[RMDB]
RNA sequence: GGGAACGACUCGAGUAGAGUCGAAAAUGGCGGAUCGGCGCGCUGGAUGGGAAAGCAUGCCCUCGGAUGGGAAAGCAUGCGCGUGACGUACGGAAACCAUCCGCAUGCGAAAGGAUGGGCGAGGAGCACCGAAGCUUGGAACGAUCGCGCCAUCCGACAAGUAGGAUGGCUUCGGCCAUCCUACUUGAAAAGAAACAACAACAACAAC
Reactivity to 2A3 in 0.01 (KOAc 150mM, MgCl2 10mM, bicine 150mM(pH8.5), 24C), signal-to-noise 3, nucleotides 027 to 156: u050g060g000c000g000g010a000u010c050g030g000c020g010c030g000c150u100g040g040a090u090g010g000g030a040a100a020g000c010a000u070g000c040c040c000u040c070g080g060a150u150g050g010g070a120a000a010g070c010a000u020g000c010g000c050g040u040g030a110c080g040u090a010c040g080g090a120a050a070c030c000a000u030c010c000g000c010a030u070g000c040g030a130a070a030g060g020a060u130g010g030g020c020g020a040g030g070a100g020c020a060c070c010g030a030a020g030c020u050u050g040g000a090a020c040g020a050u030c010g000c010g010c060c000a000u010c000c000g060a050
Reactivity to DMS in 0.01 (KOAc 150mM, MgCl2 10mM, bicine 150mM(pH8.5), 24C), signal-to-noise 2, nucleotides 027 to 156: u000g040g040c010g000g050a020u000c080g010g020c000g020c060g070c090u020g000g000a140u020g020g000g010a100a050a170g000c000a140u020g010c040c070c040u000c030g000g020a180u000g020g050g000a120a000a260g020c010a050u000g000c020g020c090g020u000g000a060c070g030u000a300c050g010g010a110a100a080c030c020a000u010c000c000g000c030a070u000g000c040g020a140a150a130g020g000a070u020g010g020g010c030g000a070g000g000a110g000c010a130c080c080g000a100a080g000c010u000u010g010g020a090a050c030g000a080u010c030g010c130g000c000c000a070u020c000c000g030a180